[RMDB]
RNA sequence: GGGAACGACUCGAGUAGAGUCGAAAAGUGACGCAAGCGUGGUACUUGGUGAAGCGUAUGUUGACGUCGACACAGGUUACUUGAUUUCCGACAUUGCAGCUUAUUCAGGUGUCAGAAUCGAUUUGUCCUGAACUCUCGGAUUCGUCCGAGAGUUCAGAAAAGAAACAACAACAACAAC
Reactivity to DMS in 0.01 (KOAc 150mM, MgCl2 10mM, bicine 150mM(pH8.5), 24C), signal-to-noise 2, nucleotides 027 to 126: g000u000g010a110c040g020c040a030a090g010c120g000u010g020g010u010a070c020u000u010g040g020u010g010a130a190g010c020g000u000a080u000g000u000u000g020a080c080g010u010c040g010a160c110a090c070a090g000g000u010u000a060c100u010u000g020a080u000u000u010c060c020g010a010c070a050u010u000g020c110a100g010c150u020u000a100u010u010c080a220g000g000u000g020u000c030a100g010a020a050u000c090g000a150u000u000u000g000u010c030
Reactivity to 2A3 in 0.01 (KOAc 150mM, MgCl2 10mM, bicine 150mM(pH8.5), 24C), signal-to-noise 1, nucleotides 027 to 126: g090u050g030a030c050g040c080a020a070g040c030g100u140g000g060u140a060c060u060u100g090g040u160g110a100a000g000c010g000u090a090u180g090u040u090g090a100c030g000u040c010g060a030c010a000c010a100g060g050u030u080a100c070u020u120g060a000u040u040u040c000c000g040a070c040a010u010u070g000c010a060g040c040u060u070a050u160u160c050a030g090g000u010g010u070c030a020g070a030a050u030c030g060a120u100u000u160g070u020c050